[RMDB]
RNA sequence: GGGAACGACUCGAGUAGAGUCGAAAAAGGGUAUGCUGACGCGGUGUGAGCGGUACGCCGCUCUUACCUUACCCAGCGUGUGUCCCGAAGACAGUUACGACGAGGGUACUGACGAGUUAAGUCAGUCGCGAGUUAGCUCAUUCGUGAGCUAACUCGCAAAAGAAACAACAACAACAAC
Reactivity to DMS in 0.01 (KOAc 150mM, MgCl2 10mM, bicine 150mM(pH8.5), 24C), signal-to-noise 2, nucleotides 027 to 126: a110g000g010g010u000a030u000g010c030u010g040a050c070g040c300g010g040u010g010u010g010a040g000c020g000g020u000a040c160g020c000c000g030c010u000c000u000u000a000c010c010u010u010a280c080c140c010a030g020c050g000u000g010u000g000u010c030c010c060g000a060a180g030a060c030a100g010u010u010a050c130g000a090c080g000a170g010g000g020u000a090c010u000g010a010c080g000a190g020u020u000a070a190g000u010c000a010g000u010c160
Reactivity to 2A3 in 0.01 (KOAc 150mM, MgCl2 10mM, bicine 150mM(pH8.5), 24C), signal-to-noise 1, nucleotides 027 to 126: a000g070g000g020u070a020u080g030c010u040g020a020c040g000c010g020g090u050g000u000g020a020g000c020g000g000u020a050c190g030c020c000g000c010u020c000u020u080a000c000c000u020u100a040c040c010c000a000g010c020g000u020g030u000g070u090c010c030c030g000a020a000g030a000c070a090g050u070u150a100c110g050a030c040g020a160g000g130g010u080a010c010u010g020a020c000g010a060g100u130u200a080a020g010u000c000a010g010u020c010